[RMDB]
RNA sequence: GGGAACGACUCGAGUAGAGUCGAAAAGGGCUGGCAGGGAAUAAGUGCGUCCCGUUGAAUCCAUAAAGAUGGCCAAUUGGUUGCUCUUGCCUUUGGCCGCAAGCUUGAACCCGUCACCGGAUUUGUACUUUGCUAACCUGUUCGCAGGUUAGCAAAGAAAAGAAACAACAACAACAAC
Reactivity to 2A3 in 0.01 (KOAc 150mM, MgCl2 10mM, bicine 150mM(pH8.5), 24C), signal-to-noise 1, nucleotides 027 to 126: g010g000g040c070u000g010g180c060a040g030g000g090a160a220u300a250a040g020u010g110c040g030u080c040c000c000g010u060u070g070a050a020u000c030c020a020u120a100a030a010g210a100u150g010g000c000c030a000a000u050u050g040g000u070u160g030c050u030c040u110u030g020c010c060u010u010u020g050g010c000c000g010c010a060a000g000c050u030u080g070a100a110c000c060c000g010u110c050a030c100c020g020g070a150u130u110u100g010u010a030
Reactivity to DMS in 0.01 (KOAc 150mM, MgCl2 10mM, bicine 150mM(pH8.5), 24C), signal-to-noise 1, nucleotides 027 to 126: g010g010g020c040u000g000g040c060a070g010g000g010a060a040u000a050a040g030u010g000c060g000u000c030c030c010g020u000u000g010a140a100u000c040c040a110u010a100a060a120g020a120u000g010g000c060c010a010a030u020u000g010g000u000u010g020c030u020c060u020u000g000c010c020u000u000u000g000g030c020c020g000c150a040a060g000c040u000u000g010a190a150c080c010c000g010u000c090a060c100c050g010g010a110u000u010u000g020u010a090